[RMDB]
RNA sequence: GGGAACGACUCGAGUAGAGUCGAAAAUAAGCUUUUCAUUACUCGUGAAGAGGCUGUAAGGCAAGUUCGAAGCUGGAUAGGCUUCGAUGUUGAGGGUGCUCAUGCUUCCCGUAAUGCAUGUGGCACCGGACCACGGCGUUCGCGCCGUGGAAAAGAAACAACAACAACAAC
Reactivity to 2A3 in 0.01 (KOAc 150mM, MgCl2 10mM, bicine 150mM(pH8.5), 24C), signal-to-noise 3, nucleotides 027 to 129: u110a040a000g010c000u000u000u040u010c000a000u010u300a110c020u030c110g110u220g200a300a120g010a010g050g000c000u020g030u050a000a000g040g000c060a080a000g090u000u000c000g000a000a000g000c000u070g130g110a240u230a170g010g000c000u000u000c030g000a000u000g050u070u060g010a040g130g000g000u020g010c000u000c000a000u000g000c000u060u010c000c000c010g060u140a090a090u240g000c010a000u020g040u100g010g010c000a000c000c000g000g000a020
Reactivity to DMS in 0.01 (KOAc 150mM, MgCl2 10mM, bicine 150mM(pH8.5), 24C), signal-to-noise 3, nucleotides 027 to 129: u060a050a080g010c000u000u000u010u040c000a040u030u010a170c180u000c000g030u040g060a010a010g050a050g030g060c090u020g020u020a090a060g000g070c050a070a130g030u030u010c020g020a000a020g040c030u010g000g000a170u040a070g000g050c010u030u000c000g000a040u090g020u020u040g030a060g000g000g000u010g030c000u020c040a000u020g040c040u000u020c020c070c030g010u030a040a070u080g040c040a000u040g010u010g050g040c040a020c010c020g040g020a100